Source: RMDB libraries RFM100 and RFMREP, as collected in RNAgym. Chemical mapping of a 177-nucleotide RNA with DMS and 2A3. The RNA was probed in 150 mM KOAc, 10 mM MgCl2 and 150 mM bicine (pH 8.5) at 24 C. For DMS the reverse transcriptase was MarathonRT. For 2A3 the reverse transcriptase was SuperScript II with manganese.
RNA sequence: GGGAACGACUCGAGUAGAGUCGAAAACACAGGUAGUGACGAUUGAGCCGACCGACAAGGCGUUCAAGACGCACGGCUGCCAACCCUGGCAGAACACGGGCAGCGAAGGCGCUGCCCCUGCCGGAGUAUUAGUCCAAGAAUUCGUUCUUGGACUAAUAAAAGAAACAACAACAACAAC
Reactivity to DMS in 0.01 (KOAc 150mM, MgCl2 10mM, bicine 150mM(pH8.5), 24C), signal-to-noise 7, nucleotides 027 to 126: c150a200c100a080g000g010u000a070g010u000g000a180c000g010a300u000u010g000a020g030c040c070g020a170c020c010g000a080c230a090a110g010g010c040g020u000u000c020a030a040g000a150c150g010c040a070c070g000g030c020u010g020c030c040a100a110c110c020c010u010g000g010c000a010g010a060a070c190a120c300g010g010g020c000a000g010c010g010a190a170g010g010c040g030c000u000g000c010c000c000c000u000g010c000c000g000g000a090g010u000
Reactivity to 2A3 in 0.01 (KOAc 150mM, MgCl2 10mM, bicine 150mM(pH8.5), 24C), signal-to-noise 9, nucleotides 027 to 126: c090a010c020a010g030g070u070a030g010u090g090a110c010g010a040u020u030g010a000g050c080c050g200a290c040c000g090a180c160a160a070g010g000c000g010u010u010c010a000a010g050a060c020g020c060a010c020g050g010c010u020g020c010c000a040a070c020c000c020u040g000g000c010a000g030a060a020c170a030c090g000g000g000c010a000g000c010g060a240a120g270g050c070g000c010u000g000c000c000c000c000u000g000c000c000g010g000a040g010u010